[RMDB]
RNA sequence: GGGAACGACUCGAGUAGAGUCGAAAACACUUGGAGUUCGCUCCAAGUGAAACCAUUGCCGAUUGGCAAUAAUACCGCUGGCGGUAAAGCGGAACAAAUAAGAAAGCGAAGACUUCGGUCUUCGCAACUGACAGCAAGAGUUCGCUCUUGCUGUCAGAAAAGAAACAACAACAACAAC
Reactivity to DMS in 0.01 (KOAc 150mM, MgCl2 10mM, bicine 150mM(pH8.5), 24C), signal-to-noise 1, nucleotides 027 to 126: c000a000c000u040u000g000g020a030g060u000u020c250g020c000u000c040c040a000a010g010u000g010a030a070a170c030c000a080u000u000g000c030c000g000a110u010u000g000g010c010a000a010u000a090a170u000a100c000c000g020c010u020g000g000c030g000g000u000a120a120a050g000c000g030g000a160a100c260a080a050a080u020a070a120g000a050a140a060g000c000g000a000a020g030a000c000u000u030c150g010g010u000c000u000u000c020g000c050a010a030
Reactivity to 2A3 in 0.01 (KOAc 150mM, MgCl2 10mM, bicine 150mM(pH8.5), 24C), signal-to-noise 2, nucleotides 027 to 126: c010a000c010u010u000g010g010a040g020u030u040c090g080c110u020c000c020a010a000g000u000g000a000a000a000c040c010a030u000u020g000c020c000g300a300u130u300g010g000c000a000a000u100a010a040u070a030c000c000g000c020u050g140g000c090g090g090u160a260a000a000g030c000g030g050a010a040c000a030a080a070u300a080a070g150a210a040a000g010c000g010a000a000g000a000c020u030u080c270g080g000u020c000u000u000c010g000c000a000a030
An RNA of 177 nucleotides, treated with DMS and 2A3 and read out base by base. The reactions ran in a buffer of 150 mM KOAc, 10 mM MgCl2 and 150 mM bicine (pH 8.5), at 24 C. 2A3 adducts were read by reverse transcription with SuperScript II with manganese.